Structure probing data (DMS and 2A3) for a 207-nucleotide construct. For DMS, 1,844 sequencing reads were counted. For DMS the reverse transcriptase was MarathonRT.
RNA sequence: GGGAACGACUCGAGUAGAGUCGAAAAUUGAUAAUUUGUUGUGUAACUUCAUUUAAAUGAAUUGAUACAAAUUUAAUACAAGUGGAUGUAGGAUAACCGUCCGUCCUUUACAUUGGUAUAAAAGUGAACGACACAGACCUCUUCGGAGGUCUGUGAACUAUUUAUCUCUGUUCGCAGAGAUAAAUAGAAAAGAAACAACAACAACAAC
Reactivity to DMS in 0.01 (KOAc 150mM, MgCl2 10mM, bicine 150mM(pH8.5), 24C), signal-to-noise 1, nucleotides 027 to 156: u000u010g030a170u000a050a090u000u010u000g010u000u000g030u010g010u010a100a110c060u000u000c020a030u000u030u000a050a070a080u000g000a040a110u000u000g020a270u000a100c030a020a080a060u000u000u000a070a080u000a060c000a040a060g040u000g000g000a140u000g030u000a080g010g000a020u010a020a170c060c080g020u000c010c060g000u000c000c030u010u000u000a030c050a050u010u000g000g060u000a070u000a030a030a040a100g020u010g010a060a150c090g010a270c010a000c020a040g000a040c010c000u010c010u000u020c300g050g010a100g050g010u000c000u000g030u010g010a020a110
Reactivity to 2A3 in 0.01 (KOAc 150mM, MgCl2 10mM, bicine 150mM(pH8.5), 24C), signal-to-noise 1, nucleotides 027 to 156: u090u000g010a000u010a190a070u020u090u020g000u020u000g000u020g030u150a130a090c050u020u020c090a040u060u140u290a300a210a010u070g150a040a020u170u110g030a030u130a240c000a000a070a040u140u190u080a090a080u220a120c050a030a000g120u020g070g030a030u170g050u120a060g010g030a050u030a070a000c060c020g000u000c000c000g000u000c000c000u020u110u000a070c050a050u020u100g020g000u090a050u020a110a090a000a000g050u090g100a030a050c090g050a000c040a000c000a000g000a000c000c000u000c020u060u110c240g040g010a020g000g000u000c000u000g000u000g000a000a000